[RMDB]
RNA sequence: GGGAACGACUCGAGUAGAGUCGAAAAGAUAUGGACUUACGGCUAGCGGGAGCAGUGAACUACAGUCAGGUGUCGGAAACGACACGUAGCUGCACUGCGAAGAACGCUAGCCGUAAGUCCUAAGUCACAAAGUCAAUAGGUUCGCCUAUUGACUUUGAAAAGAAACAACAACAACAAC
Reactivity to DMS in 0.01 (KOAc 150mM, MgCl2 10mM, bicine 150mM(pH8.5), 24C), signal-to-noise 4, nucleotides 027 to 126: g020a030u000a300u010g000g010a040c010u000u000a000c000g000g010c000u000a010g010c000g000g000g000a200g010c000a020g010u000g000a130a060c090u020a300c010a040g010u010c090a180g000g020u000g000u000c010g010g000a110a090a160c010g010a020c000a000c010g000u000a230g000c000u000g000c000a010c010u000g000c000g000a080a130g010a120a130c010g020c010u000a010g000c010c000g010u000a000a000g000u000c000c000u010a000a050g000u010c040a280